[RMDB]
RNA sequence: GGGAACGACUCGAGUAGAGUCGAAAAACGGACUACGGUCCGAAGGGUUCGGGGUACUAGUGUGAAUGCCGGGCUAGUACCCUGUGCUAGUGGUUUAUCUACUGAUGUUCAAUUAAGGGCAUUUGAAAAAAGACUCCUAACUUCGGUUAGGAGUCAACAAAACUCAAUGGUUCGCCAUUGAGUUUUGAAAAGAAACAACAACAACAAC
Reactivity to DMS in 0.01 (KOAc 150mM, MgCl2 10mM, bicine 150mM(pH8.5), 24C), signal-to-noise 2, nucleotides 027 to 156: a110c030g010g020a040c040u000a130c220g070g010u010c010c000g010a030a040g020g040g020u000u000c060g010g030g010g030u000a010c000u000a020g030u000g030u000g020a100a120u030g040c120c040g010g020g000c000u010a030g020u000a010c020c020c000u000g030u000g020c050u010a130g020u010g020g030u000u000u000a110u030c020u010a160c070u000g020a070u010g030u000u000c040a090a190u000u000a080a160g010g000g020c000a010u000u000u000g000a000a050a110a160a120a150g000a030c000u000c000c000u000a010a000c010u000u000c300g090g010u000u000a020g000g030a010g010u000c000a000a050
Reactivity to 2A3 in 0.01 (KOAc 150mM, MgCl2 10mM, bicine 150mM(pH8.5), 24C), signal-to-noise 2, nucleotides 027 to 156: a040c000g000g000a000c010u040a020c210g060g000u000c000c000g000a070a020g170g030g000u050u180c020g000g000g000g000u000a000c000u000a000g010u090g010u050g300a110a090u120g020c030c000g010g050g000c020u000a000g000u000a000c010c000c010u000g020u020g010c000u030a010g030u040g070g000u010u200u150a090u080c010u040a040c050u060g040a110u090g070u180u130c190a210a140u260u120a230a120g010g000g010c000a020u000u000u120g060a080a080a000a000a000a000g000a000c000u000c000c000u000a000a000c010u040u110c210g040g010u000u000a000g000g010a010g000u000c000a000a000
Chemical mapping of a 207-nucleotide RNA with DMS and 2A3. Conditions: 150 mM KOAc, 10 mM MgCl2 and 150 mM bicine (pH 8.5), 24 C. Source: RMDB library M2RFPK, as collected in RNAgym. DMS adducts were read by reverse transcription with MarathonRT. For DMS, 3,074 sequencing reads were counted.